[RMDB]
RNA sequence: GGGAACGACUCGAGUAGAGUCGAAAAGGAUGAUCAGUACGGUGAUAUGUCACUAUGUCCCCUGUGGGCGGAGCCUAGACAAGAGUUACAUCACCUGGGUCAUAAGGGCAGAGAUAUGUCACAAUGCCCGUCGAGAGGCAUUCGUGCCUCUCGACGGAAAAGAAACAACAACAACAAC
Reactivity to DMS in 0.01 (KOAc 150mM, MgCl2 10mM, bicine 150mM(pH8.5), 24C), signal-to-noise 2, nucleotides 027 to 126: g020g020a090u010g000a030u000c030a110g020u020a080c190g020g020u010g020a040u000a060u030g040u000c070a110c010u000a060u010g010u010c020c030c070c130u020g030u020g020g000g010c050g000g010a120g020c060c030u010a110g010a050c020a030a150g010a060g000u010u000a040c070a070u000c000a010c010c010u000g010g010g000u000c000a030u000a070a060g000g010g000c030a040g000a190g000a050u000a030u020g020u000c050a080c060a050a070u000g020c030
Reactivity to 2A3 in 0.01 (KOAc 150mM, MgCl2 10mM, bicine 150mM(pH8.5), 24C), signal-to-noise 1, nucleotides 027 to 126: g140g030a030u060g000a090u040c020a010g070u120a050c080g030g030u000g020a030u040a120u100g030u050c020a030c030u060a050u100g120u000c070c080c000c030u120g000u170g160g010g030c040g030g100a050g030c000c040u030a050g030a050c010a060a090g040a000g180u070u050a030c010a030u040c030a000c000c000u000g000g100g000u050c030a030u050a130a020g000g000g000c030a000g030a030g020a120u070a080u290g050u020c010a000c020a060a070u040g040c000